Structure probing data (2A3) for a 207-nucleotide construct. The RNA was probed in 150 mM KOAc, 10 mM MgCl2 and 150 mM bicine (pH 8.5) at 24 C. Source: RMDB library OK3TST, as collected in RNAgym. The 2A3 profile rests on 865 reads.
RNA sequence: GGGAACGACUCGAGUAGAGUCGAAAACGCGGGAUCGGUGAGUACUGGGCGUCAGAAGCAUGGGCAGCAGCACGCUGGCAAGAGUUGCCGUUGUCCUUUGACCGGGAGCUGGUCGCGUGCCCGAGCUAGAUCGGUUUGACUACGACGGAUCAGAGCCCCCUGGUACCAGAUUCGUCUGGUACCAGGGAAAAGAAACAACAACAACAAC
Reactivity to 2A3 in 0.01 (KOAc 150mM, MgCl2 10mM, bicine 150mM(pH8.5), 24C), signal-to-noise 1, nucleotides 027 to 156: c030g010c000g000g000g010a030u000c010g050g030u060g060a110g030u080a060c040u120g000g020g000c070g020u030c030a060g030a220a000g050c070a110u070g000g030g030c010a000g000c020a000g000c010a020c100g040c070u140g300g050c080a050a000g290a020g140u110u100g000c020c000g000u030u010g040u000c040c000u090u040u200g000a000c000c000g000g000g000a080g020c020u000g000g060u020c000g000c010g080u060g000c000c010c020g000a010g000c010u070a050g000a130u060c040g050g050u040u040u130g080a080c100u020a000c090g090a020c000g140g030a050u030c050a000g050a060g120c030c020